Structure probing data (2A3) for a 177-nucleotide construct.
Reactivities are given for positions 27 through 126.
The data come from the RNA Mapping Database (RMDB), library RFM100.
Conditions: 150 mM KOAc, 10 mM MgCl2 and 150 mM bicine (pH 8.5), 24 C.
RNA sequence: GGGAACGACUCGAGUAGAGUCGAAAAAGCGGCGAGCUACGGCUCGCCGCACCACCACGCUAAGUAGUAGUGCCGCAGGUAUUUCGUGAGGAACUUUACCUGCGCAUUACUCCUUAAUGUGGAGGAACAUUACAAACCAGUUCGCUGGUUUGUAAUGAAAAGAAACAACAACAACAAC
Reactivity to 2A3 in 0.01 (KOAc 150mM, MgCl2 10mM, bicine 150mM(pH8.5), 24C), signal-to-noise 2, nucleotides 027 to 126: a010g000c000g030g000c060g020a050g000c080u180a150c300g150g000c000u030c000g000c020c000g000c000a000c000c000a000c000c000a020c010g000c000u010a000a000g000u000a010g000u000a000g000u000g090c180c060g010c020a000g000g000u020a050u030u040u080c070g020u080g140a190g050g150a060a000c010u020u000u010a000c000c010u000g030c010g000c000a000u000u000a000c000u000c000c010u000u000a000a000u000g010u010g000g010a050g020g020a030a050